Source: RMDB library OK2TST, as collected in RNAgym. An RNA of 177 nucleotides, treated with 2A3 and DMS and read out base by base. The RNA was probed in 150 mM KOAc, 10 mM MgCl2 and 150 mM bicine (pH 8.5) at 24 C.

[RMDB]
RNA sequence: GGGAACGACUCGAGUAGAGUCGAAAAACAGACCAAGCUUGGCACCAUGCUGCGUGCCUGCGGCCUUUCGGCCUGAAACAGAGCCUCUCCAUGUCUUUGUUUCUACGCAUUAUCCGACGCAGAGCCACUACGAUUACUGAUUCGUCAGUAAUCGUAGAAAAGAAACAACAACAACAAC
Reactivity to 2A3 in 0.01 (KOAc 150mM, MgCl2 10mM, bicine 150mM(pH8.5), 24C), signal-to-noise 5, nucleotides 027 to 126: a000c020a020g100a020c000c020a040a010g070c070u110u120g020g000c000a010c040c020a130u250g060c030u060g020c050g050u040g060c020c010u010g000c020g000g030c010c010u140u300u210c160g000g010c000c010u020g030a040a020a010c010a010g010a010g040c010c020u070c020u010c040c030a060u100g020u010c000u000u050u020g020u020u040u000c030u040a050c060g010c020a020u080u080a060u150c040c040g040a020c020g040c020a010g010a020g070c010c010a030
Reactivity to DMS in 0.01 (KOAc 150mM, MgCl2 10mM, bicine 150mM(pH8.5), 24C), signal-to-noise 7, nucleotides 027 to 126: a070c150a080g010a110c040c050a110a110g020c060u000u000g000g010c030a070c050c050a150u020g000c150u000g010c080g030u000g010c060c030u010g010c090g010g000c010c020u010u010u010c150g020g020c010c050u010g000a060a040a050c110a060g000a060g000c040c050u000c110u010c090c070a050u000g010u000c020u010u000u000g000u000u000u000c010u000a100c120g000c050a090u010u000a070u000c050c040g010a090c050g020c020a060g000a130g020c040c100a210